RNA sequence: GGGAACGACUCGAGUAGAGUCGAAAAGAUAUGGAGUGUCGUACGAGCGAUAAGCUAGGGUUCGGAAACGAACCUAGCUUUUGACGCUUUGAAACACUCCUAAGUCAAAAGUCCCCUUCGGGGGACACUAGUCUUACAUCUUCGGAUGUAAGACUAGAAAAGAAACAACAACAACAAC
Reactivity to 2A3 in 0.01 (KOAc 150mM, MgCl2 10mM, bicine 150mM(pH8.5), 24C), signal-to-noise 3, nucleotides 027 to 126: g020a020u060a050u140g000g000a000g010u010g020u050c110g060u140a120c160g020a000g000c020g080a130u030a210a010g010c020u020a030g130g290g110u070u030c010g020g030a050a030a050c010g000a000a010c000c000u000a000g020c000u020u010u010u060g090a040c030g000c000u000u010u140g120a120a080a010c000a000c010u000c000c000u020a050a010g020u000c020a000a050a020a300g000u000c030c010c000c010u000u120c260g170g010g000g000g000a000c010a000
Reactivity to DMS in 0.01 (KOAc 150mM, MgCl2 10mM, bicine 150mM(pH8.5), 24C), signal-to-noise 5, nucleotides 027 to 126: g000a080u020a300u010g000g010a010g040u000g000u000c040g010u010a300c300g000a010g020c000g030a130u010a020a010g010c000u000a000g010g000g020u010u000c000g010g010a110a080a170c000g010a020a030c000c000u000a000g010c010u000u000u000u000g020a250c060g010c000u010u000u000g010a240a160a020c010a010c000u000c000c000u000a010a100g010u010c040a130a100a100a150g000u000c000c000c000c010u000u010c200g040g010g040g020g000a000c000a020

The record gives the reactivity of an RNA of 177 nucleotides to 2A3 and DMS.
In probing experiments dimethyl sulfate is read out at A N1 and C N3, which are open when not base-paired.
The 2A3 profile rests on 6,899 reads.
For 2A3 the reverse transcriptase was SuperScript II with manganese.
For DMS the reverse transcriptase was MarathonRT.
For DMS, 4,219 sequencing reads were counted.